[RMDB]
Annotation:
Structure probing data (2A3 and DMS) for a 207-nucleotide construct. For 2A3, 1,040 sequencing reads were counted. The reactions ran in a buffer of 150 mM KOAc, 10 mM MgCl2 and 150 mM bicine (pH 8.5), at 24 C. 2A3 adducts were read by reverse transcription with SuperScript II with manganese.
RNA sequence: GGGAACGACUCGAGUAGAGUCGAAAAUUGUUGUAUACUAAAACGUCCUCUGUACCCAUGAGGUUUUGUAACGCUGAUACUAUACCAAACUUGGAAACAUCGCCAUAGUUUUUUGCAACCUGCGCCAAAAUGACUUUUCUGUAUUCCUCGUCCGGCAAAGAACGUAUCUAUUCGUAGAUACGUUCUUAAAAGAAACAACAACAACAAC
Reactivity to 2A3 in 0.01 (KOAc 150mM, MgCl2 10mM, bicine 150mM(pH8.5), 24C), signal-to-noise 2, nucleotides 027 to 156: u040u050g010u010u000g020u050a050u020a120c050u120a070a040a060a030c050g040u000c010c010u030c030u030g040u070a070c010c050c060a010u050g010a100g060g000u000u010u050u060g060u030a070a010c030g030c020u010g050a080u030a110c050u080a060u060a150c020c080a050a060a070c030u020u030g000g000a040a090a060c030a080u080c030g000c030c020a060u050a140g040u010u000u050u060u120u070g050c010a010a060c020c010u040g020c040g030c000c030a050a060a030a080u090g030a030c010u060u060u060u030c030u140g040u090a100u080u010c010c020u060c040g110u100c050c110g100g000c110a100
Reactivity to DMS in 0.01 (KOAc 150mM, MgCl2 10mM, bicine 150mM(pH8.5), 24C), signal-to-noise 2, nucleotides 027 to 156: u010u000g010u000u000g020u010a070u000a090c050u010a030a050a100a160c070g010u000c000c010u000c030u010g030u000a190c040c000c030a180u000g010a090g030g000u000u010u010u000g010u000a070a080c040g050c030u010g020a130u010a070c070u000a150u000a090c020c030a040a050a120c050u000u010g010g010a180a060a070c050a050u000c070g060c040c020a040u000a060g010u020u010u000u000u010u010g000c080a050a050c000c030u000g020c070g000c000c030a020a050a060a130u000g020a090c030u000u000u000u000c050u000g020u000a120u000u000c010c020u000c070g000u010c000c000g020g050c050a100